[RMDB]
RNA sequence: GGGAACGACUCGAGUAGAGUCGAAAAGCUAGGCAUUUCGAUGCCUAGCGAGCGCAGAGUCAAUGCAUCUCUGAAUCACACAACAGCCGUGUCUAUGCGUGGGAGUAUCCCUCUUCGGAGGGAUAAACCAGCCAGAAAGAUUCGUCUUUCUGGCUGGAAAAGAAACAACAACAACAAC
Reactivity to DMS in 0.01 (KOAc 150mM, MgCl2 10mM, bicine 150mM(pH8.5), 24C), signal-to-noise 3, nucleotides 027 to 126: g010c000u000a000g000g010c010a010u000u000u010c140g000a020u000g010c010c000u000a000g030c000g000a040g010c140g030c030a030g010a060g020u010c080a110a090u000g030c080a090u000c020u000c020u000g000a170a090u010c050a110c080a020c060a040a110c130a070g000c090c060g000u000g000u000c100u000a060u000g010c050g000u010g000g010g010a140g020u000a020u000c000c000c000u000c000u000u000c220g010g000a010g010g010g010a000u000a020a040a100
Reactivity to 2A3 in 0.01 (KOAc 150mM, MgCl2 10mM, bicine 150mM(pH8.5), 24C), signal-to-noise 1, nucleotides 027 to 126: g000c000u000a000g020g000c000a030u020u010u220c210g090a010u050g000c000c000u000a010g010c000g010a020g020c080g040c000a010g050a020g080u060c060a050a130u110g040c020a080u070c010u000c020u040g080a080a110u090c020a050c000a030c010a260a000c000a070g070c040c020g080u040g020u000c020u050a050u090g040c030g040u060g030g060g010a070g020u030a020u020c000c020c030u000c010u010u040c160g050g000a010g000g000g000a010u010a000a000a020